[RMDB]
RNA sequence: GGGAACGACUCGAGUAGAGUCGAAAAUCCGGGUACCUGCCGGUGCCCCUCCCUCCACCACUGACUGGUGCCAAGCACCUCUCUUGCCGCUAGUAACAAGGUUACCGUUCAGCCGCAGCAGGUCCCGUACUGUUAGGGCUUUCGAGCCCUAACAGUAAAAAGAAACAACAACAACAAC
Reactivity to DMS in 0.01 (KOAc 150mM, MgCl2 10mM, bicine 150mM(pH8.5), 24C), signal-to-noise 2, nucleotides 027 to 126: u010c010c000g000g000g010u000a020c000c020u020g030c000c040g000g030u000g000c090c070c000c040u020c040c000c000u000c070c040a070c050c030a090c060u030g010a090c140u000g000g050u020g000c110c050a150a060g000c040a040c020c000u000c010u000c050u000u000g000c050c020g010c060u000a070g010u000a090a080c120a060a160g000g020u000u000a060c060c070g020u040u010c060a090g060c050c010g000c120a070g000c020a050g000g000u000c010c000c010g030
Reactivity to 2A3 in 0.01 (KOAc 150mM, MgCl2 10mM, bicine 150mM(pH8.5), 24C), signal-to-noise 2, nucleotides 027 to 126: u020c000c000g010g010g010u090a100c030c040u050g110c050c010g030g000u020g000c030c000c010c020u030c000c000c010u040c010c030a060c000c010a030c040u060g080a040c030u020g040g000u050g040c030c010a120a020g030c000a060c030c010u040c000u000c000u030u120g010c020c000g010c040u030a070g070u090a110a040c050a110a010g090g000u080u070a030c030c030g020u060u060c060a030g040c020c020g030c020a030g000c000a000g000g020u020c000c010c000g000